[RMDB]
RNA sequence: GGGAACGACUCGAGUAGAGUCGAAAAGAUAUGGAGUCAGCCACUUGGAUUUAACCUCCCCACCUCGGAAACGAGAGGGUUUGUCAGUGGGCUGACUCCUAAGUCAAAACCCAUGUUCGCAUGGGAACAUCACUCGAGUGUUCGCACUCGAGUGAUGAAAAGAAACAACAACAACAAC
Reactivity to 2A3 in 0.01 (KOAc 150mM, MgCl2 10mM, bicine 150mM(pH8.5), 24C), signal-to-noise 1, nucleotides 027 to 126: g060a020u070a030u100g040g000a020g010u000c000a000g000c040c010a090c110u100u300g300g040a120u300u300u230a100a130c010c000u000c000c010c040c000a090c000c000u000c000g010g080a040a080a060c020g000a000g000a030g100g000g000u000u110u110g110u060c050a090g020u080g090g160g000c000u000g020a010c010u020c020c000u000a020a000g000u000c020a060a070a020a110c000c000c010a000u020g030u040u100c300g040c140a000u010g030g000g050a000a060
Reactivity to DMS in 0.01 (KOAc 150mM, MgCl2 10mM, bicine 150mM(pH8.5), 24C), signal-to-noise 1, nucleotides 027 to 126: g010a040u010a300u000g000g000a000g010u000c000a040g020c000c010a040c000u000u000g010g040a050u010u020u000a060a010c000c000u000c030c030c010c030a300c080c000u000c010g000g010a070a120a170c010g010a000g000a150g000g000g000u010u010u010g010u000c030a010g000u020g000g000g000c010u010g000a010c020u000c000c000u000a020a110g000u000c030a100a080a100a130c000c000c000a000u010g000u000u000c180g040c020a020u000g000g000g000a120a100

Chemical mapping of a 177-nucleotide RNA with 2A3 and DMS.
For DMS, 1,030 sequencing reads were counted.
In probing experiments dimethyl sulfate is read out at A N1 and C N3, which are open when not base-paired.
The 2A3 profile rests on 1,401 reads.